Chemical mapping of a 207-nucleotide RNA with DMS and 2A3. DMS adducts were read by reverse transcription with MarathonRT. The DMS profile rests on 1,224 reads. The RNA was probed in 150 mM KOAc, 10 mM MgCl2 and 150 mM bicine (pH 8.5) at 24 C. The 2A3 profile rests on 1,045 reads. Reactivities are rounded to 0.1 and cut off at 0 and 3.
[RMDB]
RNA sequence: GGGAACGACUCGAGUAGAGUCGAAAACAUCUUAUUACAAAUGAGGAUCUAGAAACGAUCGUUAAAAAAGCAGUUAGAUACGGCGCUCAAAAAAUACUCGCACAUCUCGCCGCAACUACCGAUUCGGCCGAAUCGAUUAUGAACACAGCGCGUAAAAGUUCGGUAUCUUUUUCGAAAGAUACCGAACAAAAGAAACAACAACAACAAC
Reactivity to DMS in 0.01 (KOAc 150mM, MgCl2 10mM, bicine 150mM(pH8.5), 24C), signal-to-noise 1, nucleotides 027 to 156: c040a140u000c030u000u010a080u000u010a300c050a080a130a190u000g050a120g050g000a030u000c050u000a240g010a090a220a110c120g000a030u000c030g000u000u000a000a040a010a080a110a120g070c090a060g040u000u000a040g040a170u000a100c040g040g030c000g040c060u000c040a000a010a100a130a070a050u000a050c120u000c040g040c030a070c070a060u000c030u000c040g000c010c000g060c050a080a120c050u000a060c000c000g030a130u000u000c040g000g000c170c080g000a050a000u000c000g000a030u010u000a100u000g010a090a100c090a190c110a070g000c000g050c000g030u000a050a100a140a150
Reactivity to 2A3 in 0.01 (KOAc 150mM, MgCl2 10mM, bicine 150mM(pH8.5), 24C), signal-to-noise 2, nucleotides 027 to 156: c010a040u100c010u180u170a190u130u170a140c080a080a170a200u180g020a050g090g020a020u000c020u090a060g190a140a070a090c090g020a050u050c060g120u110u180a070a080a000a000a060a020g020c020a010g000u060u060a060g060a160u060a060c040g030g010c000g040c010u040c090a020a100a000a000a000a000u040a060c010u020c040g030c000a060c000a170u050c030u040c060g020c000c000g000c020a040a020c020u110a070c010c060g090a120u000u030c020g070g000c050c080g040a020a030u080c000g030a010u030u040a040u130g040a020a000c120a000c020a040g090c010g000c020g010u050a050a140a000a050